Overview: This 207-nucleotide RNA was probed chemically with 2A3. For 2A3 the reverse transcriptase was SuperScript II with manganese. For 2A3, 724 sequencing reads were counted. Reactivities are given for positions 27 through 156.
[RMDB]
RNA sequence: GGGAACGACUCGAGUAGAGUCGAAAAGGGCAGCAUUCAUCCAGAUUACUCAAGAUGCGAUGGAGUGUCAUCCCUUCCCAGUCACGCUGGGGAGAUUCAGGUUAAGGUGGGCCUACCUGGCCUAUGACAGUUAGCAAAUUGUAUUUCAGAAGGACAACAGCGAUUAUUACUUCGGUAAUAAUCGCUGAAAAGAAACAACAACAACAAC
Reactivity to 2A3 in 0.01 (KOAc 150mM, MgCl2 10mM, bicine 150mM(pH8.5), 24C), signal-to-noise 2, nucleotides 027 to 156: g000g000g000c000a030g000c020a070u000u000c000a030u030c010c010a020g040a100u080u200a200c100u120c110a040a020g150a130u160g000c090g060a030u030g110g010a060g040u010g020u070c030a280u290c020c000c000u000u060c010c020c030a030g040u090c030a020c210g020c030u080g040g000g020g000a030g000a000u120u120c040a040g030g020u100u080a150a060g080g000u070g020g040g000c020c000u000a020c090c070u020g010g000c000c010u000a010u020g060a010c010a000g050u040u140a030g080c070a010a090a090u130u110g040u030a090u020u140u050c070a070g010a200a060g110g030a000c010a070a020